[RMDB]
The record gives the reactivity of an RNA of 177 nucleotides to DMS and 2A3. For DMS the reverse transcriptase was MarathonRT. The reactions ran in a buffer of 150 mM KOAc, 10 mM MgCl2 and 150 mM bicine (pH 8.5), at 24 C. The 2A3 profile rests on 2,236 reads.

RNA sequence: GGGAACGACUCGAGUAGAGUCGAAAAGUAAGAUGAUUCGUCAUCUUACGAACCCGAUGAAGCGGCACUUACCGAGCUUCAUACAUCUAAGAGUGCAAAUAAUGGCGCGUGGUUUCGACCACGCGAACUUUACAAUGCGCUUCGGCGCAUUGUAAAGAAAAGAAACAACAACAACAAC
Reactivity to DMS in 0.01 (KOAc 150mM, MgCl2 10mM, bicine 150mM(pH8.5), 24C), signal-to-noise 2, nucleotides 027 to 126: g020u000a050a010g000a030u000g020a060u000u000c220g030u010c000a020u000c000u010u000a010c010g030a040a140c010c000c000g000a060u010g000a030a010g000c030g040g020c050a060c030u000u000a300c100c100g000a200g020c000u000u000c010a010u000a160c100a110u000c170u010a080a110g000a100g040u000g020c030a090a090a100u010a040a070u000g000g000c000g010c000g030u000g000g010u000u000u030c210g000a030c020c000a000c000g010c000g010a000a020
Reactivity to 2A3 in 0.01 (KOAc 150mM, MgCl2 10mM, bicine 150mM(pH8.5), 24C), signal-to-noise 2, nucleotides 027 to 126: g010u000a000a000g010a010u000g010a020u030u070c090g050u010c050a020u000c000u000u000a000c000g010a010a030c000c000c000g000a080u060g020a000a000g000c030g020g000c060a020c110u040u080a150c050c120g060a020g030c020u000u000c030a020u050a090c050a080u030c070u130a110a030g050a030g070u040g060c000a030a040a100u240a050a110u190g300g000c020g000c010g020u000g000g070u060u000u090c190g080a000c000c000a000c000g000c000g010a010a000